Chemical mapping of a 177-nucleotide RNA with DMS and 2A3. Values are in units of 0.01, from 0 to 300, in steps of 10. 2A3 adducts were read by reverse transcription with SuperScript II with manganese. Reactivities are given for positions 27 through 126. Source: RMDB libraries RFM100 and RFMREP, as collected in RNAgym. For 2A3, 481 sequencing reads were counted.
RNA sequence: GGGAACGACUCGAGUAGAGUCGAAAAGGGUUUUAUGAAGAUUGCAGAAUACAGGCAAUUCACUAUGAACGAUUGUUAAUUUUGUUGGUGCAUCCUUGCUCUGUCUAUAUAGGUGGCUUGCCACUUGUGAGAAGGCUUGAUUCGUCAAGCCUUCUCAAAAAGAAACAACAACAACAAC
Reactivity to DMS in 0.01 (KOAc 150mM, MgCl2 10mM, bicine 150mM(pH8.5), 24C), signal-to-noise 3, nucleotides 027 to 126: g010g000g010u000u000u030u010a020u010g000a090a060g000a080u000u000g010c000a050g000a090a090u000a060c160a080g010g010c020a050a040u010u040c060a060c120u010a070u030g000a070a090c110g010a120u000u000g010u020u030a070a090u010u040u010u000g010u000u010g000g010u000g010c080a040u030c050c010u010u000g010c010u010c010u000g010u010c040u010a070u030a050u020a070g020g020u000g000g000c020u000u010g020c020c020a010c030u000u000g020
Reactivity to 2A3 in 0.01 (KOAc 150mM, MgCl2 10mM, bicine 150mM(pH8.5), 24C), signal-to-noise 2, nucleotides 027 to 126: g040g050g000u000u000u090u090a280u220g010a010a010g090a120u220u100g000c000a020g000a170a030u190a100c050a010g030g000c000a000a000u060u080c000a000c000u070a130u250g100a050a020c010g100a080u040u040g040u020u240a050a170u020u070u040u130g100u000u050g000g000u000g030c050a020u220c010c010u040u010g020c030u050c010u020g020u000c000u000a090u030a000u090a100g040g000u000g000g000c010u080u020g010c000c000a020c000u040u010g040